Structure probing data (2A3 and DMS) for a 177-nucleotide construct. The RNA was probed in 150 mM KOAc, 10 mM MgCl2 and 150 mM bicine (pH 8.5) at 24 C. Source: RMDB library OK2TST, as collected in RNAgym.
RNA sequence: GGGAACGACUCGAGUAGAGUCGAAAAUUUAGCACUCAGCAUUAAAGUAGUAGUCUAGGACAGGGCUGAAGGCUGAUGGAUUAUGGGUUCUUGAAUACCCUGGAUCCAGUGCCAACACGCUUGGGGGACAACUGGUUAGUUUCGACUAACCAGUUGUAAAAGAAACAACAACAACAAC
Reactivity to 2A3 in 0.01 (KOAc 150mM, MgCl2 10mM, bicine 150mM(pH8.5), 24C), signal-to-noise 2, nucleotides 027 to 126: u050u040u060a020g030c010a010c040u030c030a020g020c050a080u100u160a170a060a050g040u070a020g010u020a010g020u070c020u050a030g010g080a040c010a040g040g000g000c020u020g040a090a030g070g000c000u050g050a200u060g010g010a000u000u020a060u110g000g000g030u100u010c100u130u240g080a080a050u150a120c000c000c000u010g220g010a010u000c000c000a000g020u040g010c000c000a010a000c030a030c090g030c030u050u060g010g010g000g000g010
Reactivity to DMS in 0.01 (KOAc 150mM, MgCl2 10mM, bicine 150mM(pH8.5), 24C), signal-to-noise 5, nucleotides 027 to 126: u020u000u010a070g020c040a070c030u000c040a120g010c060a100u000u010a060a120a120g000u000a050g020u000a050g020u010c030u000a070g010g010a080c110a110g000g000g010c040u000g000a080a230g010g010c010u000g020a140u000g010g010a030u000u000a090u010g000g000g010u000u000c240u010u010g010a150a100u010a030c010c000c010u000g010g010a010u000c000c000a030g000u000g000c020c020a030a130c080a070c180g000c040u000u010g010g000g000g000g010